[RMDB]
RNA sequence: GGGAACGACUCGAGUAGAGUCGAAAAGCCUGAGUUUAGGACUUCUGAAUUUAAGCAUGGAGGUGUGCUGCUUAAUGAAGGGGACACCAUUAAGAUGAGCAAGACUUGCAUACAAGGUAAUAAAGAGAUCAUAGGCAUGGUUCGCCAUGCCUAUGAUAAAAGAAACAACAACAACAAC
Reactivity to DMS in 0.01 (KOAc 150mM, MgCl2 10mM, bicine 150mM(pH8.5), 24C), signal-to-noise 4, nucleotides 027 to 126: g000c020c000u000g000a060g000u000u010u010a070g000g000a110c050u020u000c010u000g000a140a080u020u050u000a070a070g000c040a050u010g020g000a040g010g000u030g010u020g010c070u020g000c010u000u000a010a030u000g000a150a140g000g030g030g000a160c130a090c230c020a020u000u000a040a060g000a070u000g010a070g010c010a050a050g000a060c020u020u020g000c000a070u020a060c050a090a060g030g000u020a060a090u000a060a120a090g020a110g010
Reactivity to 2A3 in 0.01 (KOAc 150mM, MgCl2 10mM, bicine 150mM(pH8.5), 24C), signal-to-noise 5, nucleotides 027 to 126: g050c000c020u020g050a110g050u130u120u130a090g000g060a170c060u080u020c030u070g090a120a120u070u090u130a110a060g040c040a020u090g070g100a060g060g060u100g030u050g140c000u000g000c000u050u050a020a010u060g070a080a050g000g030g000g070a020c080a040c080c000a000u060u080a030a000g090a130u090g100a030g030c030a080a000g010a120c040u040u050g000c040a030u090a150c050a070a040g060g030u070a110a010u050a150a140a010g120a000g010